The data come from the RNA Mapping Database (RMDB), library TTRDES. Chemical mapping of a 177-nucleotide RNA with DMS and 2A3. The RNA was probed in 150 mM KOAc, 10 mM MgCl2 and 150 mM bicine (pH 8.5) at 24 C. Reactivities are rounded to 0.1 and cut off at 0 and 3. DMS adducts were read by reverse transcription with MarathonRT. For 2A3, 31,889 sequencing reads were counted.
RNA sequence: GGGAACGACUCGAGUAGAGUCGAAAAGAUAUGGAACGUGUCUAGGGAGCUAUAAUGGUCGGAAACGACCAAAAAUAGCUUUGAUCUAGCACGUUCCUAAGUCAAAGCUGCAACUUCGGUUGCAGCACAAUCUAGCAAAGUUCGCUUUGCUAGAUUGAAAAGAAACAACAACAACAAC
Reactivity to DMS in 0.01 (KOAc 150mM, MgCl2 10mM, bicine 150mM(pH8.5), 24C), signal-to-noise 9, nucleotides 027 to 126: g010a050u000a300u010g000g000a010a010c000g020u000g010u020c010u000a010g000g000g010a010g020c000u000a000u000a040a300u000g000g000u000c000g000g000a100a120a240c000g020a010c000c000a000a010a050a090a030u000a010g010c000u000u010u010g010a060u010c000u000a010g000c000a010c000g010u000u000c000c000u000a010a090g000u000c030a100a130a120g010c000u000g000c000a010a010c000u000u020c250g040g000u000u000g010c000a010g020c000a020
Reactivity to 2A3 in 0.01 (KOAc 150mM, MgCl2 10mM, bicine 150mM(pH8.5), 24C), signal-to-noise 4, nucleotides 027 to 126: g020a010u090a040u170g000g000a000a000c000g000u010g050u070c040u010a000g010g020g050a030g000c010u000a000u020a070a110u050g000g010u000c000g010g030a060a090a080c010g000a000c020c000a000a000a010a000a010u010a000g000c020u070u050u050g020a020u010c000u000a000g010c000a000c010g000u000u000c000c000u000a000a010g000u010c020a040a100a100g000c000u000g000c000a010a000c000u060u070c280g180g000u000u000g000c000a000g010c000a000